An RNA of 177 nucleotides, treated with 2A3 and DMS and read out base by base.
RNA sequence: GGGAACGACUCGAGUAGAGUCGAAAAGAUAUGGAACAAUGUUUCCCUGAGGCGUUGAAAUCGGAAACGAUGGAGCCUCAGAGCGAAAGCAUUGUUCCUAAGUCAAAUCUCCACUUCGGUGGAGAAAGGAUAGUGCUACGUUCGCGUAGCACUAUCCAAAAGAAACAACAACAACAAC
Reactivity to 2A3 in 0.01 (KOAc 150mM, MgCl2 10mM, bicine 150mM(pH8.5), 24C), signal-to-noise 1, nucleotides 027 to 126: g010a010u080a030u120g010g000a000a010c000a020a000u010g000u020u000u030c000c000c000u000g000a000g030g010c020g220u300u060g000a060a040a000u000c000g000g040a080a030a080c020g000a010u020g040g050a000g000c000c000u010c000a000g000a010g030c120g120a150a020a000g050c030a010u020u000g000u010u000c000c000u030a050a000g010u000c000a000a020a140u000c010u050c000c010a010c000u000u070c300g160g000u020g020g030a000g000a060a030a000
Reactivity to DMS in 0.01 (KOAc 150mM, MgCl2 10mM, bicine 150mM(pH8.5), 24C), signal-to-noise 2, nucleotides 027 to 126: g010a020u010a300u000g000g010a000a000c000a010a000u000g000u010u000u000c000c000c000u000g020a000g000g010c030g000u020u000g000a090a100a010u000c000g000g000a160a040a180c000g020a010u000g010g000a130g010c000c000u000c010a010g040a030g030c250g010a020a010a010g000c010a010u000u000g010u000u000c010c000u000a010a040g000u010c040a110a150a160u000c000u000c000c010a010c000u010u010c110g070g010u000g010g010a000g000a010a050a100
2A3 adducts were read by reverse transcription with SuperScript II with manganese. The reactions ran in a buffer of 150 mM KOAc, 10 mM MgCl2 and 150 mM bicine (pH 8.5), at 24 C. The DMS profile rests on 1,868 reads. It was measured as part of the RMDB library TTRDEL.